[RMDB]
RNA sequence: GGGAACGACUCGAGUAGAGUCGAAAAUAGAUAGGAGGCAAUUCUACCUCGCUGGCCUCGCAAACCCGCUCCGUAAGCCAGUACUUAUACAAGUAGAGCAUGUGCCCGACGACGGCUUCUGAAGCUAAAUUUCGGAUAACUUCGGUUAUCCGAAAUUAAAAGAAACAACAACAACAAC
Reactivity to DMS in 0.01 (KOAc 150mM, MgCl2 10mM, bicine 150mM(pH8.5), 24C), signal-to-noise 1, nucleotides 027 to 126: u000a040g010a100u020a190g000g040a050g000g020c080a040a130u010u000c080u010a150c030c020u000c050g000c080u030g010g020c000c010u000c080g000c050a060a060a150c090c060c030g000c020u000c070c000g000u010a080a130g020c020c020a100g000u010a050c070u000u000a150u000a040c110a070a070g030u010a030g010a060g000c030a100u010g000u010g000c030c000c040g000a170c110g020a080c170g040g000c030u000u010c040u010g010a060a050g020c050u000a070
An RNA of 177 nucleotides, treated with DMS and read out base by base.
The DMS profile rests on 891 reads.
For DMS the reverse transcriptase was MarathonRT.
It was measured as part of the RMDB library OK2TST.